[RMDB]
RNA sequence: GGGAACGACUCGAGUAGAGUCGAAAAGCAAACCACGUCAGCAGGAAGUGAUGGAGGUGAAUCAGGCGAUGGAUGCGCACGAAGGGUGCAACAUAUUCGGCUGGCUCGACCUGCAGCGAGUGGCCGGUCCUGUACUUGAGUUCGCUCAAGUACAGGAAAAAGAAACAACAACAACAAC
Reactivity to 2A3 in 0.01 (KOAc 150mM, MgCl2 10mM, bicine 150mM(pH8.5), 24C), signal-to-noise 3, nucleotides 027 to 126: g000c010a020a090a050c020c000a050c040g070u060c040a040g000c020a030g010g090a100a060g100u070g090a060u080g010g080a050g000g040u090g030a010a050u070c020a040g060g000c010g020a020u040g060g060a030u040g030c030g010c030a020c040g050a140a050g170g070g000u020g010c020a040a020c010a040u120a100u110u080c020g030g050c030u050g060g010c000u000c010g080a080c010c020u050g010c010a010g020c010g010a010g000u030g010g020c010c000g000g030
Reactivity to DMS in 0.01 (KOAc 150mM, MgCl2 10mM, bicine 150mM(pH8.5), 24C), signal-to-noise 5, nucleotides 027 to 126: g030c120a090a140a150c040c020a060c060g030u000c040a080g010c050a050g010g020a120a090g010u000g010a080u000g010g010a080g010g010u000g010a050a050u010c040a070g010g000c050g000a050u000g000g010a120u010g010c120g020c040a040c070g010a120a120g010g020g010u000g000c040a060a070c130a060u000a140u010u000c010g000g000c000u000g020g010c000u000c000g000a080c020c010u010g020c020a070g000c020g000a050g010u000g010g010c020c010g020g000
Overview: Structure probing data (2A3 and DMS) for a 177-nucleotide construct. Reactivities are given for positions 27 through 126. Conditions: 150 mM KOAc, 10 mM MgCl2 and 150 mM bicine (pH 8.5), 24 C. Source: RMDB library OK2TST, as collected in RNAgym.